Record summary: Conditions: 150 mM KOAc, 10 mM MgCl2 and 150 mM bicine (pH 8.5), 24 C. An RNA of 207 nucleotides, treated with DMS and 2A3 and read out base by base. It was measured as part of the RMDB library RFM130. The 2A3 profile rests on 3,258 reads.
[RMDB]
RNA sequence: GGGAACGACUCGAGUAGAGUCGAAAAUCAAAAGGGUGUUUGCCGCUUGGAUGGCACGCGGCCCCUCGGGGUCGUGGGGUAUGGUUAUCAAGACAUACUCAACACAUAAUUUUUGUCGAGAGGAAGCAGUUGGCUACCUGCGUACCGGCGCUUCCAACGAUAUCAUCAAGUUCGCUUGAUGAUAUCGAAAAGAAACAACAACAACAAC
Reactivity to DMS in 0.01 (KOAc 150mM, MgCl2 10mM, bicine 150mM(pH8.5), 24C), signal-to-noise 1, nucleotides 027 to 156: u010c000a070a100a080a070g000g010g010u020g010u000u000u000g010c010c020g000c150u000u020g060g000a200u010g000g020c000a040c020g000c000g010g010c020c000c000c020u020c300g040g020g000g060u000c020g050u000g030g030g010g000u000a000u000g010g010u020u000a150u010c170a090a250g000a050c020a030u000a040c010u000c000a000a060c040a020c020a060u010a080a050u000u000u000u000u000g000u000c040g010a240g000a180g020g000a060a030g030c020a070g030u000u000g010g030c060u000a160c050c060u010g020c160g090u010a010c010c000g050g030c020g020c020u000u000c010c000a040a150
Reactivity to 2A3 in 0.01 (KOAc 150mM, MgCl2 10mM, bicine 150mM(pH8.5), 24C), signal-to-noise 5, nucleotides 027 to 156: u110c040a030a020a020a020g140g010g000u020g010u020u020u000g010c010c030g070c120u150u140g300g090a160u080g070g020c000a000c000g000c000g000g000c020c000c000c000u040c100g000g000g000g010u010c000g000u000g000g010g000g000u000a010u000g040g060u150u120a150u290c070a080a000g030a050c010a000u000a000c000u010c010a000a010c000a000c000a010u050a110a070u040u090u050u040u070g090u070c110g040a070g020a020g140g020a030a000g000c140a120g020u030u010g020g000c030u040a050c020c080u120g100c130g030u010a020c000c000g000g000c000g020c000u010u010c000c000a000a010
The DMS profile rests on 2,996 reads.